The record gives the reactivity of an RNA of 177 nucleotides to 2A3 and DMS.
The RNA was probed in 150 mM KOAc, 10 mM MgCl2 and 150 mM bicine (pH 8.5) at 24 C.
Values cover nucleotides 27 to 126.
Source: RMDB library VIROID, as collected in RNAgym.

RNA sequence: GGGAACGACUCGAGUAGAGUCGAAAAUCUCAGCCCCUCCACCUUGGGGUGCCCUAGUCGGACACUGCAGUUCCGAUGGAAAGGCUAAGCACGUCGCAAUGACGUAAGGUGGGACUUUUCCUUCUGGGUUCUCCUUUAUGUUCGCAUAAAGGAGAACAAAAGAAACAACAACAACAAC
Reactivity to 2A3 in 0.01 (KOAc 150mM, MgCl2 10mM, bicine 150mM(pH8.5), 24C), signal-to-noise 4, nucleotides 027 to 126: u020c020u000c000a010g020c000c010c010c000u000c010c000a010c000c000u000u000g010g000g000g000u040g010c000c000c000u000a020g000u010c000g000g000a010c030a020c140u300g050c060a070g020u220u000c010c000g000a000u010g030g070a030a010a010g000g010c000u030a060a000g040c050a010c010g000u000c010g030c200a260a300u300g010a000c000g000u000a000a000g000g010u000g000g000g000a020c030u180u150u110u160c030c040u070u070c080u090g170g030
Reactivity to DMS in 0.01 (KOAc 150mM, MgCl2 10mM, bicine 150mM(pH8.5), 24C), signal-to-noise 3, nucleotides 027 to 126: u010c010u000c020a260g000c010c000c010c010u000c000c000a010c020c000u010u010g000g010g000g040u010g020c010c000c000u010a170g000u000c020g010g010a030c080a120c140u010g030c240a150g000u000u010c000c000g000a030u010g020g010a070a100a040g000g000c020u000a050a060g030c140a090c010g000u000c020g010c120a120a120u000g000a010c000g020u000a020a010g010g010u000g000g000g010a100c140u000u000u000u010c080c040u000u000c050u010g020g030